[RMDB]
RNA sequence: GGGAACGACUCGAGUAGAGUCGAAAAUCAGGGAGGAUGCCGAGGACCAUGAGGGACACUGUGGCAAGGACUUUGCAUUCUGCCUCCAUCAGCACUUGCUCAUGGUUACCACCAAUGCUUUGUGGUGAGACUAGACGGAGUUCGCUCCGUCUAGUCUAAAAGAAACAACAACAACAAC
Reactivity to 2A3 in 0.01 (KOAc 150mM, MgCl2 10mM, bicine 150mM(pH8.5), 24C), signal-to-noise 1, nucleotides 027 to 126: u090c010a000g000g000g030a000g050g000a010u050g030c010c010g060a060g000g110a080c010c010a040u060g070a090g080g030g060a080c090a020c110u040g000u040g100g000c060a110a030g060g000a020c070u030u020u110g060c000a060u060u000c000u070g080c000c040u000c040c000a070u090c000a010g030c000a010c110u150u260g000c000u010c010a060u010g000g060u010u030a080c010c000a020c030c000a110a050u220g060c100u140u110u080g040u050g000g050u080g080
Reactivity to DMS in 0.01 (KOAc 150mM, MgCl2 10mM, bicine 150mM(pH8.5), 24C), signal-to-noise 2, nucleotides 027 to 126: u000c150a030g010g000g010a090g000g020a040u000g040c030c040g010a070g010g020a090c020c020a020u000g030a060g000g020g010a040c180a130c060u010g000u010g000g020c100a070a030g010g010a150c060u010u000u000g010c100a140u000u000c070u000g000c010c000u000c040c040a050u010c130a050g020c070a090c130u000u000g000c000u000c040a020u000g000g000u000u010a130c130c030a050c030c100a070a070u020g000c140u000u010u000g010u020g000g010u000g000

This 177-nucleotide RNA was probed chemically with 2A3 and DMS. For DMS the reverse transcriptase was MarathonRT.